[RMDB]
RNA sequence: GGGAACGACUCGAGUAGAGUCGAAAAAGGAGAGCGAAUCCCGGGGCUCGGUGUGGAGAAGGAGGUGCCAAGUAGCCCCGUUGCGGAGAGUGUGUCAGCCCCAUCGCAGUGCACCUCACUGCCCUCCCAUUUUAUUCGAGUUCGCUCGAAUAAAAUGAAAAGAAACAACAACAACAAC
Reactivity to 2A3 in 0.01 (KOAc 150mM, MgCl2 10mM, bicine 150mM(pH8.5), 24C), signal-to-noise 9, nucleotides 027 to 126: a000g110g020a060g000a020g020c050g020a060a080u060c010c020c010g010g010g000g000c030u030c080g030g030u110g020u080g040g080a120g020a110a060g050g020a020g010g020u040g010c000c000a070a040g050u080a020g050c000c000c000c000g040u060u080g010c020g010g020a040g000a020g070u090g000u020g030u070c030a030g040c000c000c000c010a040u080c030g010c030a010g020u030g060c020a020c010c010u020c010a040c020u020g010c010c010c000u010c000c000
Reactivity to DMS in 0.01 (KOAc 150mM, MgCl2 10mM, bicine 150mM(pH8.5), 24C), signal-to-noise 7, nucleotides 027 to 126: a060g020g010a070g000a070g010c050g020a110a080u010c020c040c010g020g010g000g020c020u000c050g010g020u020g030u010g000g010a070g010a110a100g010g010a030g010g010u010g000c020c050a080a120g020u010a060g010c020c010c000c010g010u010u010g030c080g010g000a060g000a100g010u010g010u000g010u000c090a080g010c030c000c020c050a080u040c070g010c030a060g020u020g010c070a050c030c020u010c010a100c030u010g000c030c030c010u000c020c010
Source information: Source: RMDB libraries RFM100 and RFMREP, as collected in RNAgym. Chemical mapping of a 177-nucleotide RNA with 2A3 and DMS. For 2A3 the reverse transcriptase was SuperScript II with manganese.